The record gives the reactivity of an RNA of 177 nucleotides to DMS and 2A3. DMS adducts were read by reverse transcription with MarathonRT. The reactions ran in a buffer of 150 mM KOAc, 10 mM MgCl2 and 150 mM bicine (pH 8.5), at 24 C.

[RMDB]
RNA sequence: GGGAACGACUCGAGUAGAGUCGAAAAGUGUUGAAAACACUCCUCCUCACUAUUUUACUCUUGGAUGCAAAAUUUUAACGCUCACCCCACGCAACAAGUGGAGUGGCGUUUCUGACUUGUCCCUCAACCCCUUUAUUACGUUCGCGUAAUAAAGGGGAAAAGAAACAACAACAACAAC
Reactivity to DMS in 0.01 (KOAc 150mM, MgCl2 10mM, bicine 150mM(pH8.5), 24C), signal-to-noise 2, nucleotides 027 to 126: g030u000g000u000u000g010a090a130a190a090c020a020c020u000c050c020u000c030c030u010c100a120c080u000a040u000u000u000u000a060c080u000c030u000u000g020g010a120u000g000c040a050a010a090a140u000u000u000u000a020a010c010g000c010u010c020a010c010c010c000c020a020c020g000c130a140a090c260a120a110g010u000g000g000a020g020u000g000g000c000g000u000u000u020c090u000g010a060c090u000u000g010u000c030c010c010u000c160a050a230
Reactivity to 2A3 in 0.01 (KOAc 150mM, MgCl2 10mM, bicine 150mM(pH8.5), 24C), signal-to-noise 4, nucleotides 027 to 126: g010u010g030u040u080g080a100a090a020a010c010a000c010u030c000c010u010c010c010u060c000a070c020u100a130u090u120u090u140a070c030u070c010u090u110g040g030a020u060g050c020a020a040a160a180u070u140u050u060a030a010c010g020c040u130c090a010c010c010c010c010a000c010g070c010a050a230c030a250a100g000u010g000g000a000g000u010g000g000c000g000u000u000u000c010u010g050a050c030u020u040g040u040c000c020c010u020c010a050a090
The data come from the RNA Mapping Database (RMDB), library 15KREP. For 2A3, 2,842 sequencing reads were counted.